[RMDB]
RNA sequence: GGGAACGACUCGAGUAGAGUCGAAAACGGGGGUCGGGAAAGCGUCGCCGGUACGAGGCGGGGCCGUCGGAGUCCUACUGCGACCAGGACGAACCGGACGCGGACUACCCGUACUACCCCGGGGAGGCGUUAAAGGGAUGUUCGCAUCCCUUUAACGAAAAGAAACAACAACAACAAC
Reactivity to DMS in 0.01 (KOAc 150mM, MgCl2 10mM, bicine 150mM(pH8.5), 24C), signal-to-noise 4, nucleotides 027 to 126: c020g000g010g010g000g000u010c020g020g000g000a080a100a080g010c000g000u020c080g020c020c000g000g020u020a090c130g000a120g010g010c050g000g000g000g010c040c030g000u030c030g010g020a190g010u000c030c030u000a080c090u000g010c090g000a050c070c090a090g000g000a060c020g010a120a060c010c010g000g000a100c030g010c030g000g000a130c060u010a060c000c000c000g000u020a010c070u030a170c040c000c010c040g010g000g000g010a120g000g010
Reactivity to 2A3 in 0.01 (KOAc 150mM, MgCl2 10mM, bicine 150mM(pH8.5), 24C), signal-to-noise 6, nucleotides 027 to 126: c000g010g000g000g000g020u030c020g010g010g050a090a050a000g030c020g130u060c100g040c030c000g010g010u060a080c070g030a030g030g010c060g020g030g060g000c030c000g070u070c030g040g040a090g010u020c020c020u050a080c050u120g080c060g100a120c040c030a030g060g040a030c030g010a070a030c010c000g020g030a050c010g000c010g040g010a020c020u080a130c000c000c000g000u010a010c000u080a040c000c000c000c000g000g000g010g030a080g010g050